[RMDB]
RNA sequence: GGGAACGACUCGAGUAGAGUCGAAAAACUCAAUUGACGUCCUUUCACCAAGCGAUCACGCAUUGGAAUUUCAGCUAAUUGUUCCUUCUUUUGAAGCAACUUAGCCACCUUGCGUGCAGUCAAUCGUUGAGAGACAAAGAUAAUCAAGUAAAUGGCCGCCAUGAGAAUAUUUCGAUAUUCUCAUGGCAAAAGAAACAACAACAACAAC
Reactivity to DMS in 0.01 (KOAc 150mM, MgCl2 10mM, bicine 150mM(pH8.5), 24C), signal-to-noise 2, nucleotides 027 to 156: a040c050u080c060a010a120u000u020g010a160c040g010u000c050c060u000u010u000c040a060c050c010a270a150g030c150g020a070u010c010a000c070g000c000a050u020u000g070g010a060a090u000u000u010c140a040g000c020u000a030a040u000u000g020u000u000c110c010u000u000c090u000u000u000u010g000a000a020g020c000a050a000c110u000u000a040g030c020c050a210c030c000u000u000g030c030g050u000g000c150a080g000u010c070a050a110u010c040g000u010u000g000a060g010a150g030a110c120a030a060a120g000a120u000a060a150u000c040a030a050g000u000a010a120a170u010g000g000c180c180
Reactivity to 2A3 in 0.01 (KOAc 150mM, MgCl2 10mM, bicine 150mM(pH8.5), 24C), signal-to-noise 4, nucleotides 027 to 156: a000c030u060c050a040a050u090u050g050a020c050g020u030c040c030u030u030u060c080a080c070c040a070a020g040c010g050a020u070c000a000c010g020c030a060u050u130g060g130a180a150u070u160u210c060a020g010c000u010a010a030u090u100g000u020u040c070c000u020u030c030u030u300u050u300g010a010a000g000c000a010a040c030u000u020a000g010c010c010a040c000c000u010u010g000c010g010u000g000c010a000g060u050c020a010a070u020c030g060u050u050g020a020g000a000g020a020c040a020a130a000g060a060u220a070a090u160c060a050a040g030u050a120a170a090u040g000g060c060c050